[RMDB]
RNA sequence: GGGAACGACUCGAGUAGAGUCGAAAAUACUUAGUACACGCGUAUCGGUUUGCACUCCAGAUGUAGCAAUUGAAAACGAAGAUAUUCCUGGAAAGUUUGCAACCGCGUGGGUGCUAGGCAGUGCACAGUCAUGAGCGGUGUUCGCACCGCUCAUGACAAAAGAAACAACAACAACAAC
Reactivity to 2A3 in 0.01 (KOAc 150mM, MgCl2 10mM, bicine 150mM(pH8.5), 24C), signal-to-noise 1, nucleotides 027 to 126: u130a000c000u000u000a000g000u000a000c020a000c000g000c000g150u210a030u130c050g090g000u090u040u200g000c000a000c020u000c000c000a080g010a120u090g130u050a010g180c180a240a300u000u090g140a120a060a000a020c090g000a040a120g000a060u170a060u220u050c000c000u000g020g010a210a280a000g050u020u270u260g000c000a000a000c000c000g000c000g000u000g010g000g000u000g000c000u000a000g000g000c000a100g110u130g040c040a010c020a240
The record gives the reactivity of an RNA of 177 nucleotides to 2A3. The RNA was probed in 150 mM KOAc, 10 mM MgCl2 and 150 mM bicine (pH 8.5) at 24 C. Source: RMDB library RFM100, as collected in RNAgym.